[RMDB]
RNA sequence: GGGAACGACUCGAGUAGAGUCGAAAAGAACUGGUAUGUAAGCUACUUCUUCCAGUAGCUGCGUCAUAACAUCAAGGUUAUGCAUACUGAGCCGAAGCUCAGCUUCGGUCCUCCAAGGAAGACCAAAUACAGCUCAGCCCGUUCGCGGGCUGAGCAAGUUGUUUAUACCGUUCGCGGUAUAAACAACAAAAGAAACAACAACAACAAC
Reactivity to 2A3 in 0.01 (KOAc 150mM, MgCl2 10mM, bicine 150mM(pH8.5), 24C), signal-to-noise 3, nucleotides 027 to 156: g060a060a050c090u170g010g010u000a000u000g020u000a020a010g010c000u000a000c000u040u090c000u000u020c000c000a000g010u000a000g010c000u000g000c000g000u010c000a000u010a010a000c010a060u240c200a190a010g300g000u000u000a000u010g000c000a000u010a000c000u000g010a010g010c000c000g000a000a000g020c020u060c300a030g010c000u020u000c000g020g000u010c000c010u020c030c040a050a050g000g000a000a000g020a000c030c100a000a080a020u210a090c060a030g010c010u000c000a000g000c010c010c000g030u070u060c120g030c020g080g000g000c000u000g000a000g000c010a000a010
Reactivity to DMS in 0.01 (KOAc 150mM, MgCl2 10mM, bicine 150mM(pH8.5), 24C), signal-to-noise 1, nucleotides 027 to 156: g000a010a020c130u000g050g040u020a000u000g000u000a300a300g000c000u000a000c010u000u010c030u010u000c090c010a300g000u000a010g020c000u000g000c050g000u000c020a020u020a000a000c010a300u000c150a170a200g010g000u010u000a020u020g030c000a010u000a020c000u000g000a300g000c000c010g000a030a020g000c010u000c140a110g000c000u000u000c000g030g060u000c080c030u020c110c080a030a120g080g020a030a020g040a230c090c020a050a060a100u020a140c080a120g010c010u000c000a040g000c010c030c000g000u000u010c300g000c030g040g000g080c000u000g000a000g020c010a000a010
An RNA of 207 nucleotides, treated with 2A3 and DMS and read out base by base.
Values are in units of 0.01, from 0 to 300, in steps of 10.
Conditions: 150 mM KOAc, 10 mM MgCl2 and 150 mM bicine (pH 8.5), 24 C.